[RMDB]
RNA sequence: GGGAACGACUCGAGUAGAGUCGAAAAUAGCGAAGUAGGAUUUUAUGCGUCAAGUGUUCACAGGCUGGGGAGUCGCCGUGAAACGAAAAGCAGAAAGCGUGCUGCUUACGAUAUUAUUUCCGCACCCAUAAGAAGUCUCUGUUCGCAGAGACUUCAACGUACAGGGUGGGUUCGCCCACCCUGUACGAAAAGAAACAACAACAACAAC
Reactivity to 2A3 in 0.01 (KOAc 150mM, MgCl2 10mM, bicine 150mM(pH8.5), 24C), signal-to-noise 1, nucleotides 027 to 156: u140a020g040c030g070a070a020g050u080a040g070g050a060u010u000u060u110a080u090g030c000g020u060c100a100a040g050u060g070u180u030c030a020c070a100g000g030c050u120g050g000g000g020a110g090u120c030g000c010c040g010u070g000a020a020a000c010g020a030a050a080a000g000c020a000g060a060a160a030g110c090g060u110g050c010u010g000c000u010u000a040c020g020a010u000a030u100u000a020u000u080u030c000c000g010c020a040c000c020c000a060u070a120a070g000a000a000g000u020c010u000c000u000g040u050u100c160g010c070a000g000a000g000a000c010u000u000c000a000a000
Overview:
Structure probing data (2A3) for a 207-nucleotide construct. For 2A3 the reverse transcriptase was SuperScript II with manganese.